Structure probing data (DMS and 2A3) for a 207-nucleotide construct. The 2A3 profile rests on 2,098 reads. The data come from the RNA Mapping Database (RMDB), library OK3TST. The reactions ran in a buffer of 150 mM KOAc, 10 mM MgCl2 and 150 mM bicine (pH 8.5), at 24 C. DMS adducts were read by reverse transcription with MarathonRT.
RNA sequence: GGGAACGACUCGAGUAGAGUCGAAAAAGCUGCACGUCUCCUGCCCGCAAUUCUCCAUCCCUCGUACUGUUGGAAGCUACGAAGGCAUCUGUGCCCUCGUCACCACUUCUCUGGAUCACUGCGCUACAAGGACAGAGUGGCUCAAGGAACACGGUUAUCUAGAUUAUUACUUCGGUAAUAAUCUAGAAAAAGAAACAACAACAACAAC
Reactivity to DMS in 0.01 (KOAc 150mM, MgCl2 10mM, bicine 150mM(pH8.5), 24C), signal-to-noise 2, nucleotides 027 to 156: a090g030c050u000g010c020a090c050g020u000c010u000c040c030u000g020c030c060c030g070c080a070a080u020u000c000u010c010c020a120u000c000c000c030u000c070g030u000a100c090u010g000u000u000g010g020a060a110g000c020u000a060c020g020a030a030g020g060c040a110u000c150u010g010u000g030c000c000c010u000c010g020u000c100a120c030c040a080c030u000u000c020u010c020u000g020g020a070u010c040a100c040u000g030c050g030c050u000a070c050a110a080g010g000a080c050a070g000a100g010u010g000g030c020u000c030a070a060g020g000a070a070c030a040c060g010g000u010u000a140
Reactivity to 2A3 in 0.01 (KOAc 150mM, MgCl2 10mM, bicine 150mM(pH8.5), 24C), signal-to-noise 3, nucleotides 027 to 156: a010g040c030u040g010c010a020c080g050u020c000u000c000c000u000g020c000c020c030g050c080a040a140u100u030c030u010c040c010a080u080c000c000c010u040c030g030u080a070c040u070g100u120u070g070g020a070a040g020c060u040a050c020g040a050a030g010g010c010a110u040c130u200g170u140g010c000c010c010u020c010g050u040c020a030c080c010a020c010u050u040c050u020c010u040g040g060a060u080c020a060c140u080g010c040g010c020u070a060c030a070a010g050g040a020c020a040g060a040g030u040g020g000c030u020c060a020a060g060g000a040a030c070a010c050g080g040u110u070a030